The record gives the reactivity of an RNA of 177 nucleotides to DMS and 2A3. The data come from the RNA Mapping Database (RMDB), library OK2TST. The RNA was probed in 150 mM KOAc, 10 mM MgCl2 and 150 mM bicine (pH 8.5) at 24 C. For 2A3 the reverse transcriptase was SuperScript II with manganese. The DMS profile rests on 1,163 reads. As a SHAPE reagent, 2A3 marks flexible, mostly unpaired nucleotides at the ribose 2'-OH.
RNA sequence: GGGAACGACUCGAGUAGAGUCGAAAACAGCUGUAGGACUAGAGUUUAGCAUGUCUCCUGAGAAAUAGAAAAUGACUGCUUGAAACUUUACCAAAGCCACACAGGAAGCAUCAAACUCCCUAUGGAGACUAGUUCUACGGUUCGCCGUAGAACUAGUAAAAGAAACAACAACAACAAC
Reactivity to DMS in 0.01 (KOAc 150mM, MgCl2 10mM, bicine 150mM(pH8.5), 24C), signal-to-noise 2, nucleotides 027 to 126: c050a150g020c010u000g020u010a030g000g000a150c080u000a180g000a090g010u010u000u000a080g020c130a010u000g050u000c040u010c030c030u010g000a170g020a070a130a090u000a110g000a110a100a040a090u010g000a060c100u000g040c050u000u000g020a080a070a160c160u030u000u000a080c120c090a070a050a060g010c030c060a090c140a080c020a020g020g030a010a040g000c010a020u000c050a060a020a010c010u000c020c010c080u000a060u000g010g000a040g010
Reactivity to 2A3 in 0.01 (KOAc 150mM, MgCl2 10mM, bicine 150mM(pH8.5), 24C), signal-to-noise 2, nucleotides 027 to 126: c010a040g100c020u040g000u050a020g010g020a020c050u120a040g000a020g040u040u010u110a080g020c080a020u030g010u000c020u050c020c000u050g030a020g110a070a250a060u260a060g110a060a220a030a050u130g040a060c050u040g000c000u000u000g030a090a100a030c010u090u140u080a060c020c070a050a000a000g040c000c070a020c000a000c010a030g060g010a070a000g040c000a000u050c020a020a000a040c000u010c000c000c020u030a050u070g040g000a060g040